The record gives the reactivity of an RNA of 177 nucleotides to DMS and 2A3. For 2A3, 15,737 sequencing reads were counted. 2A3 adducts were read by reverse transcription with SuperScript II with manganese. Values cover nucleotides 27 to 126.
[RMDB]
RNA sequence: GGGAACGACUCGAGUAGAGUCGAAAAGCUGGUGGUCGCGGCAUAGCGUCCAAGCGGCGGUGACAAUGAAGAGCACUUGGAUGAUGUCGAGCAUUCCGAAUCGGGAUGUGACUAGGAGGACGCCGUCGAUAAGUAGGUCAUUCGUGACCUACUUAUCAAAAGAAACAACAACAACAAC
Reactivity to DMS in 0.01 (KOAc 150mM, MgCl2 10mM, bicine 150mM(pH8.5), 24C), signal-to-noise 9, nucleotides 027 to 126: g020c070u010g010g020u000g000g010u010c030g020c020g010g000c030a040u000a090g020c030g010u000c010c020a030a050g010c060g010g010c010g010g010u000g000a130c190a120a120u010g010a120a110g010a160g000c020a110c010u000u000g000g000a040u000g010a060u000g010u000c020g020a270g000c010a030u000u000c010c000g020a130a150u010c080g010g000g000a010u000g020u010g000a080c070u000a090g000g010a110g000g000a070c060g000c020c030g010u000c120
Reactivity to 2A3 in 0.01 (KOAc 150mM, MgCl2 10mM, bicine 150mM(pH8.5), 24C), signal-to-noise 8, nucleotides 027 to 126: g070c060u060g010g050u040g020g000u050c030g000c010g030g010c030a030u060a080g190c020g010u000c010c000a030a010g050c140g120g010c010g000g100u110g030a080c130a140a120u270g070a150a070g040a020g060c010a010c040u020u030g020g000a020u040g020a020u040g020u020c010g010a010g010c000a010u030u000c000c010g120a210a260u260c110g000g000g010a010u010g030u040g030a030c030u050a050g050g020a030g040g000a010c020g000c010c010g050u090c020